[RMDB]
RNA sequence: GGGAACGACUCGAGUAGAGUCGAAAAGCUCGGCGCCAUUGGCGUCGGUGGCAACCUGUUUCCAGAACCCAACCACCUCGCCCUGUUUCUCGUCGAUGACGACCCGUUGAUAGGGGUAGCGCCAGCCGGGGUAAUGUCUUUUCGAAGACAUUACCCCAAAAGAAACAACAACAACAAC
Reactivity to DMS in 0.01 (KOAc 150mM, MgCl2 10mM, bicine 150mM(pH8.5), 24C), signal-to-noise 2, nucleotides 027 to 126: g000c020u000c070g000g000c020g020c010c030a200u010u010g040g030c000g020u000c060g010g030u010g010g000c080a090a120c020c010u010g010u000u010u000c010c030a150g010a100a120c070c000c020a060a140c080c000a090c060c050u010c050g000c030c020c040u000g000u000u010u010c030u000c020g000u000c030g000a150u010g010a070c040g000a080c030c030c010g000u000u000g010a060u010a120g000g010g000g000u000a050g020c090g010c000c000a090g000c120c080
Reactivity to 2A3 in 0.01 (KOAc 150mM, MgCl2 10mM, bicine 150mM(pH8.5), 24C), signal-to-noise 1, nucleotides 027 to 126: g020c010u010c050g000g040c010g020c000c020a300u140u300g020g000c020g040u000c020g000g020u010g010g030c010a040a040c000c010u040g010u040u090u000c100c000a000g010a050a070c030c000c000a040a030c020c000a020c010c000u010c060g060c000c000c010u070g080u070u160u060c030u020c030g010u020c060g110a130u180g020a020c010g040a020c000c000c000g040u040u120g110a160u110a160g060g010g030g030u020a040g040c000g070c000c000a020g150c060c100